[RMDB]
RNA sequence: GGGAACGACUCGAGUAGAGUCGAAAAGACACUCUCUACGGAGAGUGUCACAUCGCGGUGACGCGAUGAGAGUACUUCGUGAGAAGUACUCAAGCCGGUCUACGGACCGGCAGUGGUACUACGGUACCACACCUUCUGCUACGGCAGAAGGAGACGCGACUACGGUCGCGUCAAGGAUAACGCUUCGGCGUUAUCCACUCAUGCGUGAGCAUGAGAAGGCGUUCUACAGUACGUUUAAACUGUAGGUAGAGUAACGUGAGUUACUCACUGAAUCAUUCGUGAUUCAGAAAAGAAACAACAACAACAAC
Reactivity to DMS in 0.01 (KOAc 150mM, MgCl2 10mM, bicine 150mM(pH8.5), 24C), signal-to-noise 3, nucleotides 027 to 266: g000a010c000a000c000u000c010u000c000u000a140c160g030g000a020g000a010g010u000g000u000c010a050c010a000u010c010g010c000g000g000u020g000a200c010g020c000g010a000u000g010a140g010a010g010u010a000c000u000u000c010g000u020g000a120g000a020a010g000u000a000c000u000c000a100a110g020c000c010g010g000u000c000u000a140c200g020g010a010c000c000g010g020c000a010g010u000g000g000u000a000c000u000a110c220g040g020u000a000c000c000a000c010a060c000c000u000u000c000u000g010c000u000a110c230g030g020c000a000g000a010a000g000g000a120g010a000c000g020c000g020a010c010u010a130c150g020g010u000c000g010c000g020u000c000a040a080g000g000a000u000a000a000c000g020c000u010u020c210g020g010c010g010u000u000a000u000c000c010a040c010u000c000a000u000g000c000g000u010g000a220g000c000a000u000g000a000g000a210a100g010g000c000g000u000u000c000u000a000c000a010g010u000a000c000g020u000u010u000a010a000a020c010u000g010u000a010g000g000u020a080g010a050g040u000a000a000c000g000u010g000a200g010u000u000a010c000u010c000a180
Reactivity to 2A3 in 0.01 (KOAc 150mM, MgCl2 10mM, bicine 150mM(pH8.5), 24C), signal-to-noise 9, nucleotides 027 to 266: g000a000c000a000c000u000c000u010c010u030a030c280g060g000a000g000a000g000u000g000u000c000a000c000a000u000c000g010c010g020g080u150g060a070c010g000c000g000a000u010g020a030g000a000g000u000a000c000u000u000c010g010u030g030a070g000a010a000g000u000a000c000u000c010a000a000g000c000c000g000g000u000c010u040a120c300g140g010a000c000c000g000g000c010a010g010u000g000g000u000a000c010u010a030c210g100g000u000a000c000c000a000c000a010c000c000u000u000c000u000g000c000u020a060c270g150g000c000a000g000a000a000g000g000a040g000a000c000g000c000g000a000c000u040a030c300g120g000u000c000g000c000g000u000c000a000a050g000g000a000u000a000a000c000g000c010u040u140c290g100g000c000g000u000u000a000u000c000c000a030c000u000c000a000u000g000c010g050u100g080a040g000c000a000u010g010a000g010a010a060g140g010c010g000u060u060c010u000a000c000a000g000u000a000c010g020u030u100u300a040a040a020c010u010g000u000a000g000g010u060a040g000a000g000u010a010a010c060g100u120g170a110g020u040u000a000c000u000c000a010
Chemical mapping of a 307-nucleotide RNA with DMS and 2A3. The RNA was probed in 150 mM KOAc, 10 mM MgCl2 and 150 mM bicine (pH 8.5) at 24 C. For DMS the reverse transcriptase was MarathonRT.